[RMDB]
Source information
Chemical mapping of a 207-nucleotide RNA with 2A3. The reactions ran in a buffer of 150 mM KOAc, 10 mM MgCl2 and 150 mM bicine (pH 8.5), at 24 C.

RNA sequence: GGGAACGACUCGAGUAGAGUCGAAAAACCUCUCCUCGACUCGGAUUGGCUCAUCCCCAGGUCGAGGCGAGGGUCCUCAGUUCUCUCUAUUCUUUCCUUCUUGAAAGAGGAGACUGCUGGACCAAACGCCCGAGCCGGGAUGGGCCGCAGCCGGGCGGGAUUACAACAGGUUCGCCUGUUGUAAUCCAAAAGAAACAACAACAACAAC
Reactivity to 2A3 in 0.01 (KOAc 150mM, MgCl2 10mM, bicine 150mM(pH8.5), 24C), signal-to-noise 1, nucleotides 027 to 156: a010c020c040u070c010u020c020c010u030c030g210a300c040u000c030g010g010a050u030u230g060g020c020u000c000a000u040c060c000c030c060a140g000g010u000c010g050a100g030g000c000g010a010g000g100g000u000c000c000u000c000a120g000u300u040c010u000c010u010c020u110a270u300u010c020u080u030u110c020c010u230u260c090u140u300g000a010a020a010g000a010g020g030a000g000a000c010u000g030c060u030g000g000a000c000c000a240a300a040c000g000c000c000c000g030a080g140c010c010g000g000g000a000u000g000g000g000c000c010g000c000a000g000c000c000g020g000g030c020g020